[RMDB]
The record gives the reactivity of an RNA of 177 nucleotides to 2A3 and DMS. Values cover nucleotides 27 to 126. Conditions: 150 mM KOAc, 10 mM MgCl2 and 150 mM bicine (pH 8.5), 24 C.
RNA sequence: GGGAACGACUCGAGUAGAGUCGAAAAGACCACGGGUGCCGGCGUCACGGUCCACCUGCCUGCCGCGUCCCGACAGGCCGCAGGGUGUGGGUCCCCGCACGAUGCGGCGACCCAGCGGCCAUCCGCGGUCUGCUACCAGGUUCGCCUGGUAGCAGACAAAAGAAACAACAACAACAAC
Reactivity to 2A3 in 0.01 (KOAc 150mM, MgCl2 10mM, bicine 150mM(pH8.5), 24C), signal-to-noise 1, nucleotides 027 to 126: g050a020c020c040a000c040g000g000g010u080g070c070c070g020g020c050g090u200c080a040c130g010g010u060c000c000a060c000c030u040g030c000c010u050g000c010c000g020c020g000u050c070c010c020g020a040c030a050g020g020c000c000g010c070a070g000g120g000u070g020u020g010g040g000u010c200c130c000c010g040c000a150c130g110a080u300g000c000g000g000c000g010a000c000c000c000a000g020c000g010g030c050c010a030u040c000c030g040c060g070
Reactivity to DMS in 0.01 (KOAc 150mM, MgCl2 10mM, bicine 150mM(pH8.5), 24C), signal-to-noise 2, nucleotides 027 to 126: g000a230c020c050a130c050g030g000g040u000g020c040c000g030g020c080g000u000c170a050c130g020g020u020c070c030a040c010c030u030g010c030c000u010g030c050c020g000c140g000u010c010c000c000g010a080c050a020g000g030c020c190g010c050a090g020g010g040u010g050u010g020g010g010u000c020c180c000c010g000c030a170c210g010a110u010g020c000g030g010c200g000a000c000c000c000a040g000c040g010g000c050c010a040u000c040c020g010c100g020
For 2A3, 1,138 sequencing reads were counted.